[RMDB]
RNA sequence: GGGAACGACUCGAGUAGAGUCGAAAAGUAUAACUAGAAAAAAUGAGAGAAGCAUGGAGUCACGCAAUCGGUUUGUAUAGUGCUAAAUUAGUAUUAUACUUAUAAUUGGCGUCGGGCGCUUGUCUGAGUACAGUAUUACUUUCGAGUAAUACUGUACAAAAGAAACAACAACAACAAC
Reactivity to 2A3 in 0.01 (KOAc 150mM, MgCl2 10mM, bicine 150mM(pH8.5), 24C), signal-to-noise 9, nucleotides 027 to 126: g050u050a060u080a280a120c120u130a060g220a050a100a030a030a030a080u220g020a070g010a010g020a090a010g020c030a030u110g060g040a060g060u040c010a010c040g000c000a020a050u080c080g090g010u040u030u020g000u010a010u000a010g000u000g000c000u050a140a280a300u260u080a050g000u010a010u020u010a010u000a000c000u030u040a060u040a120a070u040u080g080g000c000g020u020c080g050g030g020c040g020c030u040u090g060u030c010u030g020a010
Reactivity to DMS in 0.01 (KOAc 150mM, MgCl2 10mM, bicine 150mM(pH8.5), 24C), signal-to-noise 6, nucleotides 027 to 126: g020u010a050u030a090a110c070u020a110g010a000a030a050a070a080a080u010g000a080g000a050g000a060a050g020c040a070u030g010g010a120g010u010c060a040c040g010c030a040a020u000c120g010g010u000u010u000g000u000a000u000a010g010u000g000c000u000a040a070a140u040u010a020g010u000a010u000u000a020u000a010c000u000u000a030u010a080a050u010u000g000g010c010g010u000c110g020g010g000c080g010c070u010u010g010u000c010u000g010a300
An RNA of 177 nucleotides, treated with 2A3 and DMS and read out base by base. DMS (dimethyl sulfate) methylates the pairing face of unpaired adenines and cytosines. It was measured as part of the RMDB libraries RFM100 and RFMREP. The reactions ran in a buffer of 150 mM KOAc, 10 mM MgCl2 and 150 mM bicine (pH 8.5), at 24 C.